[RMDB]
RNA sequence: GGGAACGACUCGAGUAGAGUCGAAAAGGGGUCAGAGCGAUGGUGAGGUGCUCGAGGCUGAAGCCUCCACGGCUACCCACCGAGCACUACCCACCACCUGCCGCUCUGACGGAGGCACCCAAAUCUCCACAGCAAGGUUCGCCUUGCUGUGGAGAAACAACGUCAAUUACUUCGGUAAUUGACGUUGAAAAGAAACAACAACAACAAC
Reactivity to 2A3 in 0.01 (KOAc 150mM, MgCl2 10mM, bicine 150mM(pH8.5), 24C), signal-to-noise 1, nucleotides 027 to 156: g120g000g010g020u000c030a000g000a000g000c010g020a020u060g000g000u000g020a030g020g030u000g000c000u000c000g020a020g050g060c210u130g100a120a020g040c030c000u190c250c140a180c150g020g000c020u020a060c000c000c040a060c050c000g000a000g000c020a000c020u080a050c050c130c010a040c000c010a020c000c020u100g110c050c000g000c000u000c000u000g000a000c000g010g010a020g020g000c050a080c030c000c000a090a040a000u050c000u000c000c000a000c000a000g000c000a010a010g020g020u090u260c250g130c040c000u000u000g000c010u000g020u000g000g000a000g000a000a000a000